This 177-nucleotide RNA was probed chemically with DMS and 2A3. The DMS profile rests on 1,977 reads.
RNA sequence: GGGAACGACUCGAGUAGAGUCGAAAAUCAUUAACAAUGAAAUUGCUAAAAGCUUUUUUCUAAUUGGCAGAUCAGUGCACUAAGUUUAAGCCUUAGAAACAAUUUUAUAAUCAAUCUAAAGACCCACCACUUACGCUAAGUUCGCUUAGCGUAAGUGAAAAGAAACAACAACAACAAC
Reactivity to DMS in 0.01 (KOAc 150mM, MgCl2 10mM, bicine 150mM(pH8.5), 24C), signal-to-noise 2, nucleotides 027 to 126: u000c140a110u030u030a050a130c210a210a020u000g040a000a070a010u000u000g000c000u010a100a050a030a210g000c010u000u000u000u000u000u000c000u020a070a040u020u020g000g000c110a000g010a060u020c190a140g010u020g010c000a060c050u020a030a050g020u000u010u010a060a080g030c060c100u000u030a000g000a080a100a100c060a020a010u010u010u000u020a010u010a090a040u030c030a030a090u000c120u020a030a030a100g000a080c000c010c000a040c300
Reactivity to 2A3 in 0.01 (KOAc 150mM, MgCl2 10mM, bicine 150mM(pH8.5), 24C), signal-to-noise 7, nucleotides 027 to 126: u090c020a020u040u190a080a090c040a030a060u070g020a040a010a020u010u020g000c040u080a040a050a040a110g010c040u050u050u010u000u030u040c020u060a160a120u140u090g030g000c020a020g090a270u150c070a060g190u030g070c050a040c160u070a090a060g030u010u030u080a040a010g030c000c000u030u030a040g050a100a080a030c030a010a010u020u030u060u040a090u080a080a080u110c080a060a000u020c040u190a090a040a070g090a110c000c000c000a030c010
Reactivities are given for positions 27 through 126. High 2A3 reactivity points to a flexible backbone, as in loops and unpaired stretches. The reactions ran in a buffer of 150 mM KOAc, 10 mM MgCl2 and 150 mM bicine (pH 8.5), at 24 C. For DMS the reverse transcriptase was MarathonRT. It was measured as part of the RMDB library OK1LIB.